[RMDB]
RNA sequence: GGGAACGACUCGAGUAGAGUCGAAAAUCGGAUUCUAGGAGGGCUGGUGGUGAUCAUGCCGCUGUACGCGCUCGCUCUCGACAUGGCUUUCACCUCUGGUCAGGUGGUCACAACCGUGUUCUACGGCGAUCCCUCUCUCUUUCGAGAGAGAGGGAUCAAAAGAAACAACAACAACAAC
Reactivity to DMS in 0.01 (KOAc 150mM, MgCl2 10mM, bicine 150mM(pH8.5), 24C), signal-to-noise 2, nucleotides 027 to 126: u030c060g000g010a090u000u040c020u000a050g000g000a100g000g020g000c030u000g000g010u000g000g050u000g020a060u040c040a060u060g020c010c000g000c050u010g020u040a050c120g000c150g000c130u030c090g030c070u040c040u000c100g000a050c060a060u000g000g000c000u000u020u000c020a000c030c040u000c080u000g000g020u000c140a050g000g010u000g020g010u010c050a070c230a060a300c000c000g040u000g020u030u010c080u040a100c090g000g040c120
Reactivity to 2A3 in 0.01 (KOAc 150mM, MgCl2 10mM, bicine 150mM(pH8.5), 24C), signal-to-noise 5, nucleotides 027 to 126: u100c050g070g050a090u190u060c040u130a110g020g040a040g000g090g010c040u060g010g050u040g030g000u020g060a150u110c060a050u250g050c000c020g000c040u010g040u100a070c110g010c010g010c040u080c060g020c020u020c030u040c010g050a050c020a080u070g000g020c000u020u090u080c010a010c020c000u010c010u050g060g010u090c040a040g000g030u020g010g030u090c040a020c000a100a040c010c010g020u020g020u050u020c050u120a050c020g130g000c050
Notes:
This 177-nucleotide RNA was probed chemically with DMS and 2A3. For DMS the reverse transcriptase was MarathonRT. For 2A3 the reverse transcriptase was SuperScript II with manganese.